[RMDB]
RNA sequence: GGGAACGACUCGAGUAGAGUCGAAAAGAUAUGGAGAGCUAAGACAUCGGGAUCGAAGAACGGUCGUAACAUCAGAUCGGAAACGAUCUGUGGACCGGGAGAUUAGAUGUCUUAGCUCUCCUAAGUCCUUAAACUGAGUCUUCGGACUCAGUUUAAGAAAAGAAACAACAACAACAAC
Reactivity to DMS in 0.01 (KOAc 150mM, MgCl2 10mM, bicine 150mM(pH8.5), 24C), signal-to-noise 2, nucleotides 027 to 126: g000a100u010a300u000g010g000a020g020a000g020c000u000a000a000g000a030c000a000u000c000g010g010g020a000u000c000g020a130a170g000a200a200c020g010g010u000c000g020u000a080a260c220a040u010c030a020g000a000u000c000g000g000a120a110a280c000g000a000u000c000u000g010u010g000g000a010c020c020g000g020g000a090g000a010u000u000a180g000a030u000g000u000c000u000u010a000g000c000u000c000u010c000c000u000a010a060g000u010c050